[RMDB]
RNA sequence: GGGAACGACUCGAGUAGAGUCGAAAAGCCGUGCUCGAGAGGGAGCAGAAAAUGCAGAGCUAUCCCGUCGUUUCGCUAAACAAAUCCGAAACGACAAAUUGCGUUACAUACGCAAUCCUCUAAUGAACAGCAAGGAGAGUUUCGACUCUCCUUGCUGAAAAGAAACAACAACAACAAC
Reactivity to DMS in 0.01 (KOAc 150mM, MgCl2 10mM, bicine 150mM(pH8.5), 24C), signal-to-noise 1, nucleotides 027 to 126: g010c030c020g000u000g030c000u000c020g000a070g000a030g000g000g000a040g010c040a080g000a000a050a070a090u000g030c140a100g010a110g000c000u000a160u000c000c000c000g000u020c000g000u000u000u070c000g020c100u000a120a100a120c300a030a100a120u000c280c000g000a000a080a000c000g010a000c000a030a040a020u000u000g000c000g000u000u000a020c220a120u020a020c000g000c000a030a000u000c020c080u000c020u020a110a080u020g050a070a200
Reactivity to 2A3 in 0.01 (KOAc 150mM, MgCl2 10mM, bicine 150mM(pH8.5), 24C), signal-to-noise 2, nucleotides 027 to 126: g000c000c000g050u050g030c000u020c020g120a050g010a000g030g080g000a020g000c000a030g190a010a160a020a020u180g070c040a010g020a040g080c020u010a030u080c000c000c000g010u010c000g000u000u000u000c010g020c050u160a110a140a130c090a070a170a040u060c030c010g020a000a000a000c000g010a010c010a000a100a010u010u020g000c010g010u020u110a160c060a080u190a030c040g000c000a000a030u000c000c010u010c020u030a050a140u260g010a070a020
The record gives the reactivity of an RNA of 177 nucleotides to DMS and 2A3. Source: RMDB library M2PK90, as collected in RNAgym. The 2A3 profile rests on 1,496 reads. Reactivities are given for positions 27 through 126. For 2A3 the reverse transcriptase was SuperScript II with manganese. Conditions: 150 mM KOAc, 10 mM MgCl2 and 150 mM bicine (pH 8.5), 24 C. As a SHAPE reagent, 2A3 marks flexible, mostly unpaired nucleotides at the ribose 2'-OH.